[RMDB]
RNA sequence: GGGAACGACUCGAGUAGAGUCGAAAACCAUAGGAUUUCGAUCCUAUGGCCUGCUAUGUCGCGUAAUAGCUUUUCGUCUCUACUUGGGUCGUUCCCACGCGAUGGGGACCGGUUUCGACCGGUCCAACCAAUUGCACACGUUCGCGUGUGCAAUUGGAAAAGAAACAACAACAACAAC
Reactivity to DMS in 0.01 (KOAc 150mM, MgCl2 10mM, bicine 150mM(pH8.5), 24C), signal-to-noise 1, nucleotides 027 to 126: c000c000a000u000a000g000g010a020u000u000u000c170g000a030u000c000c000u000a000u000g010g020c250c180u000g020c010u000a000u010g000u030c190g020c240g010u000a110a010u000a000g000c000u000u000u000u000c010g010u000c000u000c000u000a000c000u000u000g000g000g000u000c000g000u000u000c000c000c010a000c090g040c110g000a100u010g000g010g000g010a020c000c010g010g000u010u000u000c160g010a030c000c000g010g000u000c010c000a030a080
Structure probing data (DMS) for a 177-nucleotide construct.
The reactions ran in a buffer of 150 mM KOAc, 10 mM MgCl2 and 150 mM bicine (pH 8.5), at 24 C.
The DMS profile rests on 1,513 reads.
Values cover nucleotides 27 to 126.